[RMDB]
RNA sequence: GGGAACGACUCGAGUAGAGUCGAAAACGAGGUCGGCACCCUUGAGGAGGUUAUCGACGAUACGCAUGCCAUAGUUUCCACAGCCGGCUCGGAGUACUACGUUGCGAUGCUUUCGUUCGUUGAUAAGGACCAGCUGAUUAUUCGUAAUCAGCUGGUCAAAAGAAACAACAACAACAAC
Reactivity to 2A3 in 0.01 (KOAc 150mM, MgCl2 10mM, bicine 150mM(pH8.5), 24C), signal-to-noise 1, nucleotides 027 to 126: c040g010a030g010g120u070c000g020g000c020a030c010c030c000u030u100g180a140g020g050a060g010g080u060u040a060u070c030g000a000c010g020a030u050a130c070g010c000a010u080g000c000c000a060u040a050g050u000u030u050c030c000a070c010a060g030c020c000g000g040c010u000c010g030g010a050g030u060a020c020u030a060c070g140u130u060g050c030g040a020u030g030c000u080u090u020c020g040u080u060c000g030u000u020g030a050u030a120a040g080
Reactivity to DMS in 0.01 (KOAc 150mM, MgCl2 10mM, bicine 150mM(pH8.5), 24C), signal-to-noise 2, nucleotides 027 to 126: c050g010a060g030g030u000c010g000g000c050a300c100c020c030u020u000g020a090g010g020a150g020g010u020u000a040u010c030g000a060c020g000a030u000a050c100g000c100a040u000g000c030c050a050u010a030g010u010u000u000c040c010a200c090a110g020c040c010g000g000c020u010c070g000g000a070g010u010a050c040u010a040c090g020u000u010g010c060g010a060u000g010c050u020u010u000c060g010u000u000c040g020u000u010g010a030u020a070a120g020
Structure probing data (2A3 and DMS) for a 177-nucleotide construct. Conditions: 150 mM KOAc, 10 mM MgCl2 and 150 mM bicine (pH 8.5), 24 C. For 2A3, 1,635 sequencing reads were counted. It was measured as part of the RMDB library OK2TST. The DMS profile rests on 2,201 reads. For 2A3 the reverse transcriptase was SuperScript II with manganese.